[RMDB]
RNA sequence: GGGAACGACUCGAGUAGAGUCGAAAAGGUAUUUUCGAAUACCGGUCCGGCGUACUACAGCUAAAUCGAUGAAAGUUGCAAUACAAGCAUGUCCCAAAUAGGACAUGCUAUGCAACUGGAGAUUAGCUGUAUCGCAAGAAUGGGACUUCGGUCCCAACUCUAAUGGUCCCUUCGGGGACCAUUAGAGAAAAGAAACAACAACAACAAC
Reactivity to DMS in 0.01 (KOAc 150mM, MgCl2 10mM, bicine 150mM(pH8.5), 24C), signal-to-noise 1, nucleotides 027 to 156: g020g000u000a020u000u000u000u010c230g010a070a030u000a010c010c010g000g030u020c000c000g040g010c010g040u000a050c090u000a040c010a000g010c000u010a030a080a070u000c000g000a250u000g010a140a130a060g000u000u010g000c010a030a090u000a150c070a020a010g000c000a020u000g030u020c000c000c020a050a110a270u000a080g000g010a000c000a000u000g000c010u000a000u000g010c010a000a010c000u000g000g000a130g000a030u000u000a030g030c000u010g000u000a000u000c000g000c020a050a040g010a130a170u000g000g000g000a040c010u000u000c150g050g020u000c000c000c000a010a010
Reactivity to 2A3 in 0.01 (KOAc 150mM, MgCl2 10mM, bicine 150mM(pH8.5), 24C), signal-to-noise 3, nucleotides 027 to 156: g000g000u010a030u050u010u050u170c300g140a010a000u000a010c000c010g000g020u030c010c000g080g020c000g030u090a080c070u000a000c010a000g020c000u030a100a070a270u070c080g170a300u020g060a000a050a010g000u020u000g010c030a060a140u080a300c110a120a000g000c000a000u000g010u020c040c020c030a140a250a100u220a070g000g000a000c000a000u000g010c000u000a010u000g000c000a000a000c000u000g010g020a010g000a000u000u000a000g000c000u000g000u000a000u010c000g000c000a030a040g080a050a080u110g000g000g000a000c000u020u020c240g160g000u010c010c010c010a000a000